[RMDB]
RNA sequence: GGGAACGACUCGAGUAGAGUCGAAAACAACAAAACAAAACAUAGGGGAGUCAGGGUUCGGAACUCCUACCAGAACCUAGGGUAACACUGACUGUGGAGGGGAAAAGAAAGAAAACAAAACAAAACACAGUAGGGUAUAGUUCGCUAUACCCUACUGAAAAGAAACAACAACAACAAC
Reactivity to 2A3 in 0.01 (KOAc 150mM, MgCl2 10mM, bicine 150mM(pH8.5), 24C), signal-to-noise 5, nucleotides 027 to 126: c050a020a000c070a010a100a000a030c100a050a140a030a010c050a100u260a060g000g000g000g000a060g050u060c030a020g050g000g000u020u000c020g000g060a060a060c030u110c050c020u050a050c000c010a060g020a010a000c000c000u020a030g040g000g000u040a060a020c050a010c120u100g100a030c030u060g050u090g050g050a130g030g010g010g010a050a080a000a000g120a010a090a000g110a040a050a020a000c090a050a070a010a000c050a020a110a050a030c130a020
Reactivity to DMS in 0.01 (KOAc 150mM, MgCl2 10mM, bicine 150mM(pH8.5), 24C), signal-to-noise 4, nucleotides 027 to 126: c150a020a170c210a070a030a070a070c110a060a050a080a090c170a110u060a110g020g020g010g000a040g000u020c040a030g000g000g020u010u020c070g000g010a050a080c130u030c100c020u030a030c050c010a130g020a030a040c060c030u010a130g000g000g000u020a080a050c160a140c050u010g000a050c060u000g020u020g000g010a120g000g020g000g000a110a030a050a050g010a050a050a040g030a140a030a070a090c160a060a090a040a020c040a030a030a160a080c300a040